[RMDB]
RNA sequence: GGGAACGACUCGAGUAGAGUCGAAAAGAAAGCGUCAUUCGACGAAAGAGAAGGUAAUGCCGCAUUAGGUUACGUGCGCAACCUAAUCAGCGCACGACAAGAAAUCUCAUUCGCAGAAAUAAGAAAAGACGGGAGUAUUAUUCGUAAUACUCCCGUCAAAAGAAACAACAACAACAAC
Reactivity to 2A3 in 0.01 (KOAc 150mM, MgCl2 10mM, bicine 150mM(pH8.5), 24C), signal-to-noise 6, nucleotides 027 to 126: g050a040a100a000g040c020g010u010c020a050u080u090c080g130a070c040g060a130a090a040g090a010g030a130a040g080g000u120a050a000u050g010c050c000g030c050a080u110u170a010g030g000u010u020a020c020g000u030g000c020g010c000a010a010c000c020u120a100a130u120c090a030g000c000g000c010a000c000g010a010c020a040a030g100a030a070a020u030c010u000c040a140u160u120c060g000c050a010g100a050a060a030u220a150a030g060a030a060a040a020
Reactivity to DMS in 0.01 (KOAc 150mM, MgCl2 10mM, bicine 150mM(pH8.5), 24C), signal-to-noise 4, nucleotides 027 to 126: g000a090a160a070g010c030g000u000c030a100u000u000c050g000a170c030g010a040a070a140g010a110g010a090a150g010g010u070a030a020u000g010c050c030g000c120a200u040u010a040g000g020u000u000a050c040g010u000g020c030g000c000a050a040c090c060u020a060a070u030c140a190g020c040g030c020a020c120g000a230c200a070a110g000a040a100a210u000c030u000c000a160u010u000c050g030c260a060g000a030a020a080u030a040a100g000a040a040a070a100

This 177-nucleotide RNA was probed chemically with 2A3 and DMS. For 2A3, 6,926 sequencing reads were counted. For 2A3 the reverse transcriptase was SuperScript II with manganese. For DMS, 5,195 sequencing reads were counted.